[RMDB]
RNA sequence: GGGAACGACUCGAGUAGAGUCGAAAAGCUAGCAAGUGGUGCCGAUGCGCGCUAAAGCACCACAGCCACCGAUGACCUGUAAGGUGGCAAACAGGUCAGCUAAGAAAAGCGCGCACGCGAAAGCGGAAUGACGUAUGCUAUUCGUAGCAUACGUCAUAAAAGAAACAACAACAACAAC
Reactivity to 2A3 in 0.01 (KOAc 150mM, MgCl2 10mM, bicine 150mM(pH8.5), 24C), signal-to-noise 6, nucleotides 027 to 126: g050c070u100a010g050c080a280a030g000u000g000g000u000g000c000c010g010a010u090g000c000g000c000g010c000u030a020a000a010g000c000a000c000c000a000c010a010g000c000c000a030c010c010g150a120u150g050a030c010c000u010g020u040a070a060g050g010u050g050g000c010a010a020a000c020a010g030g060u050c020a010g000c070u100a110a030g130a120a080a020a000g010c000g000c000g030c000a010c010g030c000g020a130a030a020g000c020g010g030a100
Reactivity to DMS in 0.01 (KOAc 150mM, MgCl2 10mM, bicine 150mM(pH8.5), 24C), signal-to-noise 5, nucleotides 027 to 126: g000c050u000a080g020c040a120a060g000u010g010g030u010g000c010c020g010a110u010g030c000g020c000g020c010u000a130a300a240g010c000a000c000c000a030c000a150g020c050c030a120c040c030g020a190u010g000a050c030c000u000g000u000a120a140g000g000u000g000g000c020a000a080a070c110a040g000g000u010c030a040g020c070u010a090a100g000a150a120a120a020g010c000g000c000g010c010a010c010g000c020g010a050a070a140g000c010g000g010a100